RNA sequence: GGGAACGACUCGAGUAGAGUCGAAAAUGAAUCGAGGUGAACACGUCGUCCGAAACGAUCUUCUCGGACAGAAGGAUCGAAUCUUCGUAGUUGUAGCCGUUCCACGGCAUGAACGCGACGAGCACGAGCAUUAGUCCGUAUUCGUACGGACUAAUGCAAAAGAAACAACAACAACAAC
Reactivity to 2A3 in 0.01 (KOAc 150mM, MgCl2 10mM, bicine 150mM(pH8.5), 24C), signal-to-noise 4, nucleotides 027 to 126: u150g060a030a070u070c070g020a060g090g110u040g050a080a030c090a010c170g040u020c020g010u020c020c070g040a020a030a040c040g010a020u000c000u040u010c040u020c040g080g080a040c040a080g010a010a010g040g020a040u060c000g040a070a120u000c030u040u010c020g050u050a180g030u030u020g200u240a010g000c000c010g010u300u000c100c090a010c000g020g020c010a030u250g010a020a000c010g000c010g010a010c020g010a040g000c060a010c040g040a030
Reactivity to DMS in 0.01 (KOAc 150mM, MgCl2 10mM, bicine 150mM(pH8.5), 24C), signal-to-noise 4, nucleotides 027 to 126: u000g020a110a090u010c040g000a120g000g010u010g010a070a070c090a140c070g000u020c010g020u010c080c020g000a020a060a170c050g000a040u000c040u000u000c140u000c030g000g000a150c170a100g010a030a030g010g000a070u000c010g010a070a130u010c070u010u000c040g020u000a100g010u000u010g010u010a040g010c010c000g020u000u020c200c160a090c030g010g000c020a010u000g000a010a010c020g020c010g020a020c050g000a100g020c090a050c060g000a110